[RMDB]
RNA sequence: GGGAACGACUCGAGUAGAGUCGAAAACCCCCGAUCCGAGGGGCCCGACUGCCAAGUUUGGAGAGCACCUCGGGCCGAAGGGUUGAGUAGCACUCAAAGGGAGGAAUCCACUCGGAGUAGAACAGAGGUACUCGCUUGUUCGCAAGCGAGAAAAGAAACAACAACAACAAC
Reactivity to 2A3 in 0.01 (KOAc 150mM, MgCl2 10mM, bicine 150mM(pH8.5), 24C), signal-to-noise 6, nucleotides 027 to 129: c000c010c000c010c010g020a030u010c000c010g010a010g010g010g000g000c010c000c000g000a030c020u140g100c080c050a140a080g040u030u080u160g140g020a150g000a020g040c030a030c000c000u010c000g000g000g000c020c000g040a060a060g010g010g000u000u020g000a010g000u040a020g030c040a050c080u030c010a090a020a050g040g010g000a020g020g040a030a050u020c010c010a030c010u030c010g030g020a030g010u120a040g010a080a020c040a020g040a020g070g030u040a070
Reactivity to DMS in 0.01 (KOAc 150mM, MgCl2 10mM, bicine 150mM(pH8.5), 24C), signal-to-noise 5, nucleotides 027 to 129: c010c000c000c080c030g000a050u000c030c020g000a030g000g000g000g000c010c020c040g000a070c090u040g090c040c110a080a050g030u050u000u080g010g000a140g020a150g040c000a060c050c060u030c040g000g000g000c100c020g000a080a130g010g010g020u000u000g030a070g050u040a090g030c090a280c030u050c040a040a070a090g010g020g040a040g000g020a050a030u040c000c000a000c050u000c000g040g000a050g000u020a070g010a070a080c090a100g000a050g040g070u040a110

An RNA of 170 nucleotides, treated with 2A3 and DMS and read out base by base.
Source: RMDB library 15KLIB, as collected in RNAgym.
For DMS, 21,561 sequencing reads were counted.
Reactivities are given for positions 27 through 129.
Reactivities are rounded to 0.1 and cut off at 0 and 3.